[RMDB]
RNA sequence: GGGAACGACUCGAGUAGAGUCGAAAACGCGCUGCUAGGGAAGAAAUAGUGAUGCCUGAAGAGUUGUAUACCUCGAUGUUGAGAUUAGCUCGAAAUACGAGUUCAGGCUUUUCAACCAAGGUGUUAAUCCAUUUAGUCGUUUCGACGACUAAAUGGAAAAAGAAACAACAACAACAAC
Reactivity to 2A3 in 0.01 (KOAc 150mM, MgCl2 10mM, bicine 150mM(pH8.5), 24C), signal-to-noise 2, nucleotides 027 to 126: c010g000c000g030c010u030g030c020u090a090g000g050g050a110a010g010a030a130a020u160a060g140u080g210a110u150g010c000c010u010g000a010a040g170a060g100u030u100g020u000a050u060a050c020c000u010c020g040a070u150g040u070u060g050a130g000a300u140u180a020g000c020u010c000g030a030a050a040u150a070c060g010a000g000u000u010c010a010g000g040c020u050u030u000u000c010a030a030c020c020a010a010g050g000u040g000u060u090a080a080
Reactivity to DMS in 0.01 (KOAc 150mM, MgCl2 10mM, bicine 150mM(pH8.5), 24C), signal-to-noise 3, nucleotides 027 to 126: c100g010c050g020c040u000g000c090u010a140g000g000g000a060a110g010a040a060a090u010a090g010u000g000a110u010g000c030c010u010g010a030a060g000a080g010u000u010g010u000a050u010a070c260c030u010c000g010a100u020g010u000u000g000a220g010a150u010u010a080g000c060u000c010g000a050a080a050u000a040c060g010a060g020u000u000c040a040g000g000c020u000u000u010u000c040a050a280c030c060a070a130g000g000u000g000u000u010a110a130
Structure probing data (2A3 and DMS) for a 177-nucleotide construct. The DMS profile rests on 2,395 reads. For 2A3, 1,109 sequencing reads were counted. The RNA was probed in 150 mM KOAc, 10 mM MgCl2 and 150 mM bicine (pH 8.5) at 24 C. Values cover nucleotides 27 to 126.